[RMDB]
RNA sequence: GGGAACGACUCGAGUAGAGUCGAAAAUUAUAACGUGGCUGCCCGGCCUGGAACAGUCCCACAUCCUGCUCCAGAAGGACCCAAGGUUGACAGAUCCUUUCAGACCUAUGCUAAGGAAACAAAAUAAGUAUUACCUGGGAUUCGUCCCAGGUAAUACAAAAGAAACAACAACAACAAC
Reactivity to DMS in 0.01 (KOAc 150mM, MgCl2 10mM, bicine 150mM(pH8.5), 24C), signal-to-noise 1, nucleotides 027 to 126: u000u020a040u020a090a150c120g000u000g030g020c040u000g010c010c000c030g020g020c020c010u000g000g020a050a090c060a110g000u020c010c020c040a120c160a050u000c080c020u010g000c040u000c010c010a040g010a140a080g000g000a070c040c010c030a100a070g010g000u000u000g010a130c170a180g030a130u000c000c010u000u000u000c090a020g010a090c070c070u000a060u040g000c060u000a030a080g000g010a060a070a070c100a080a050a120a050u050a040a140